[RMDB]
This 177-nucleotide RNA was probed chemically with DMS and 2A3. The RNA was probed in 150 mM KOAc, 10 mM MgCl2 and 150 mM bicine (pH 8.5) at 24 C. In probing experiments dimethyl sulfate is read out at A N1 and C N3, which are open when not base-paired. The DMS profile rests on 8,902 reads.
RNA sequence: GGGAACGACUCGAGUAGAGUCGAAAACCGUCGGUUGGCACUUUUCGUCCUUUCUGGCCAUUUGUGAGUCCCGAAGGAGAAGGACGUCAGGGACUCAACGACGGAAAGCUUCGCGUUCGCGCGAAGCCUCAGUUAAACAGUUCGCUGUUUAACUGAGAAAAGAAACAACAACAACAAC
Reactivity to DMS in 0.01 (KOAc 150mM, MgCl2 10mM, bicine 150mM(pH8.5), 24C), signal-to-noise 6, nucleotides 027 to 126: c000c010g010u000c000g000g010u000u000g020g030c040a220c200u010u010u010u000c020g010u000c010c020u000u010u020c180u010g010g000c010c010a030u010u000u010g000u000g000a040g010u000c000c010c020g010a150a160g010g000a160g010a100a060g000g010a050c040g010u010c110a200g020g010g000a020c010u000c000a010a000c000g000a010c000g000g000a050a040a100g000c000u000u000c010g010c000g010u000u010c220g000c020g020c000g000a010a000g000c000
Reactivity to 2A3 in 0.01 (KOAc 150mM, MgCl2 10mM, bicine 150mM(pH8.5), 24C), signal-to-noise 7, nucleotides 027 to 126: c000c000g010u000c010g010g050u010u000g020g010c030a060c180u120u140u170u170c070g040u030c020c020u090u270u180c120u130g070g000c000c010a010u020u020u010g010u010g010a010g010u010c020c010c020g020a130a070g120g090a110g040a120a090g050g020a020c010g000u030c030a020g000g000g000a000c000u000c000a010a000c000g000a000c010g010g000a090a020a000g010c000u010u000c000g000c000g030u020u070c220g000c000g000c000g080a000a000g000c000